[RMDB]
RNA sequence: GGGAACGACUCGAGUAGAGUCGAAAAAUCUCUUGUAUACGAUAUACUUAUUGUUAAUUUCAUUGACCUUUACGCAAUCCUGCGUAAAUGCUGGUAUAGGGUGUACUUCGGAUUUCCGAGCCUAUAUACCUAACGGCAUCUUCGGAUGCCGUUAGGUAAAAGAAACAACAACAACAAC
Reactivity to 2A3 in 0.01 (KOAc 150mM, MgCl2 10mM, bicine 150mM(pH8.5), 24C), signal-to-noise 2, nucleotides 027 to 126: a000u000c000u000c020u120u000g000u000a060u060a040c020g010a050u010a040u000a070c010u130u090a110u100u130g010u010u020a120a080u050u180u300c090a010u020u100g100a100c000c020u020u010u000a000c010g010c040a050a150u120c060c080u000g000c000g000u000a000a000a040u120g020c060u090g000g070u000a020u060a020g160g010g040u020g010u010a100c000u040u100c000g080g000a100u070u040u090c010c070g000a010g040c020c000u150a150u030a060u040
The record gives the reactivity of an RNA of 177 nucleotides to 2A3. The RNA was probed in 150 mM KOAc, 10 mM MgCl2 and 150 mM bicine (pH 8.5) at 24 C. For 2A3, 599 sequencing reads were counted. Values are in units of 0.01, from 0 to 300, in steps of 10.